[RMDB]
RNA sequence: GGGAACGACUCGAGUAGAGUCGAAAAAAUGCGGCUGGCUUCAAAGGCGGCACGGUUGAGCAGUACAUCACGCAGUUCGGUAACGGUCGCAUCGGCAAGAUUGGCACCAACUUCCUGCUGACUGGCAACCAUUUCGUUGGUUACGUUCGCAAUGAUACCACUGUUCACAGUUCGCUGUGAACAGUGGAAAAGAAACAACAACAACAAC
Reactivity to 2A3 in 0.01 (KOAc 150mM, MgCl2 10mM, bicine 150mM(pH8.5), 24C), signal-to-noise 1, nucleotides 027 to 156: a000a010u140g000c000g020g010c010u000g050g010c020u030u040c090a130a100a060g000g000c000g020g000c040a010c060g020g010u040u030g010a010g140c060a000g000u010a070c010a110u040c030a020c090g000c010a020g000u070u100c070g040g000u080a040a020c040g000g050u010c030g000c050a050u110c020g090g030c010a050a080g010a070u050u060g060g030c010a050c030c020a020a030c010u020u050c000c010u000g000c030u050g020a090c050u000g040g040c010a020a000c000c000a010u060u110u040c060g030u060u030g030g000u030u000a060c090g040u030u020c010g020c030a060a060u080g030a020u090a110
Reactivity to DMS in 0.01 (KOAc 150mM, MgCl2 10mM, bicine 150mM(pH8.5), 24C), signal-to-noise 1, nucleotides 027 to 156: a130a050u000g040c050g020g060c050u010g030g000c080u040u000c060a080a160a090g020g000c030g010g050c020a060c060g000g010u020u000g010a110g030c000a090g030u010a110c050a140u000c020a120c090g020c070a130g000u020u010c040g010g040u000a050a050c050g070g020u000c010g000c020a300u020c020g000g020c060a100a070g010a170u000u000g020g000c080a040c000c030a060a070c030u020u000c000c000u010g040c020u010g010a070c010u010g010g000c010a010a000c030c010a020u010u010u000c050g040u000u000g000g010u010u000a080c070g000u000u000c030g030c040a080a080u010g000a120u000a090
Source information:
Conditions: 150 mM KOAc, 10 mM MgCl2 and 150 mM bicine (pH 8.5), 24 C. Structure probing data (2A3 and DMS) for a 207-nucleotide construct. High 2A3 reactivity points to a flexible backbone, as in loops and unpaired stretches. Values are in units of 0.01, from 0 to 300, in steps of 10. High DMS reactivity at an A or C suggests that its Watson-Crick edge is free. Reactivities are given for positions 27 through 156.